Conditions: 150 mM KOAc, 10 mM MgCl2 and 150 mM bicine (pH 8.5), 24 C. This 207-nucleotide RNA was probed chemically with 2A3. The 2A3 profile rests on 683 reads.

[RMDB]
RNA sequence: GGGAACGACUCGAGUAGAGUCGAAAAUCUUCGCCUUCCGGAGUUCCCUCUCGAGAUCCUCUAACUUCUUUCUUCCGCUCACCCACUGCUCGAGAACCUCUUCUCUCCCUCCGCGGCCCUUCUUCGACUCGGACCGGCUCAUCUCGACAAGAGGCGGGACUUAGUAUGGCUUCGGCCAUACUAAGUCAAAAGAAACAACAACAACAAC
Reactivity to 2A3 in 0.01 (KOAc 150mM, MgCl2 10mM, bicine 150mM(pH8.5), 24C), signal-to-noise 1, nucleotides 027 to 156: u010c020u050u060c050g030c070c000u180u150c090c050g000g040a040g020u020u050c050c030c040u050c020u020c020g140a140g010a130u080c050c000u040c040u100a120a190c040u100u020c010u060u150u050c020u100u000c020c040g040c000u040c010a060c000c010c010a070c040u060g000c020u030c070g040a040g030a070a040c010c010u010c000u050u030c040u020c020u030c030c000c010u010c000c010g040c010g040g010c030c000c010u010u010c010u040u020c020g000a010c010u000c010g000g020a000c000c000g000g060c010u010c000a080u070c030u000c060g060a040c020a090a000g000a030g020g030c040g030g060